Chemical mapping of a 177-nucleotide RNA with 2A3 and DMS. It was measured as part of the RMDB library RFMREP. High 2A3 reactivity points to a flexible backbone, as in loops and unpaired stretches. For 2A3, 910 sequencing reads were counted. For DMS, 992 sequencing reads were counted. The reactions ran in a buffer of 150 mM KOAc, 10 mM MgCl2 and 150 mM bicine (pH 8.5), at 24 C.

RNA sequence: GGGAACGACUCGAGUAGAGUCGAAAAUUCUUUAGCAUCCGUUUUGGAUGCACCUUGAGGAACAAGGUGGGUAAUUUUCGUUUUGAAGAUAUGCCACCGACUUAUAGAGCAGAGAGGCACCUAUGAGGUAGCAACAUUACUUCGGUAAUGUUGCUACAAAAGAAACAACAACAACAAC
Reactivity to 2A3 in 0.01 (KOAc 150mM, MgCl2 10mM, bicine 150mM(pH8.5), 24C), signal-to-noise 2, nucleotides 027 to 126: u010u010c000u000u130u090a000g000c000a010u010c010c000g110u080u110u170u300g010g010a010u010g030c020a020c000c000u050u080g050a040g070g000a070a070c050a180a150g000g020u020g000g040g050u140a020a090u000u020u010u000c010g100u170u080u230u300g050a080a000g050a010u010a010u160g010c000c000a010c000c000g000a010c000u010u010a030u090a100g010a000g040c090a030g060a010g010a010g140g000c000a040c080c000u030a060u060g080a040g030
Reactivity to DMS in 0.01 (KOAc 150mM, MgCl2 10mM, bicine 150mM(pH8.5), 24C), signal-to-noise 1, nucleotides 027 to 126: u010u000c040u000u000u000a150g010c010a020u010c000c000g010u000u000u010u000g010g000a020u000g030c000a070c110c050u000u010g000a090g020g000a060a090c140a060a130g000g010u000g010g020g010u010a040a010u010u000u000u000c000g040u020u010u010u010g010a060a030g020a010u010a000u000g020c000c000a010c010c020g050a100c120u000u000a000u010a070g010a150g010c090a120g000a100g030a130g000g010c070a100c080c010u020a030u000g000a060g040